[RMDB]
RNA sequence: GGGAACGACUCGAGUAGAGUCGAAAAUUUGCACGCCGGUGCAGGUGAGUACGCGUGUAAGGUGUUCGUGACUCCCACGAGCUUUUCGUUGUCGCGCGCUGUUUCAAGAGUCGCGCUGCGCCACCGAAGUCUCUGGUGGAUUCGUCCAUCAGGGGCUAAAAGAAACAACAACAACAAC
Reactivity to 2A3 in 0.01 (KOAc 150mM, MgCl2 10mM, bicine 150mM(pH8.5), 24C), signal-to-noise 9, nucleotides 027 to 126: u010u000u030g010c010a010c000g020c030c080g130g010u030g000c020a020g090g120u210g030a110g010u040a010c010g000c000g000u010g000u010a010a000g050g030u040g010u000u010c010g000u010g040a050c020u010c000c010c000a000c010g010a010g020c000u050u070u030u040c020g020u020u060g040u050c020g000c000g000c010g000c050u060g100u100u140u120c110a130a040g040a040g160u190c060g010c000g000c050u050g000c010g000c010c000a050c010c010g030a020
Reactivity to DMS in 0.01 (KOAc 150mM, MgCl2 10mM, bicine 150mM(pH8.5), 24C), signal-to-noise 9, nucleotides 027 to 126: u020u000u000g010c010a020c020g010c060c240g010g020u010g000c040a070g010g020u030g000a150g010u010a070c120g000c020g000u000g010u010a030a000g010g020u010g010u010u000c000g010u000g000a140c100u020c060c060c010a100c030g000a030g000c030u010u010u020u010c040g010u000u000g000u000c030g010c030g010c050g000c020u010g010u010u020u030c180a110a120g000a090g000u020c090g010c030g000c010u020g020c020g010c040c010a060c040c020g000a110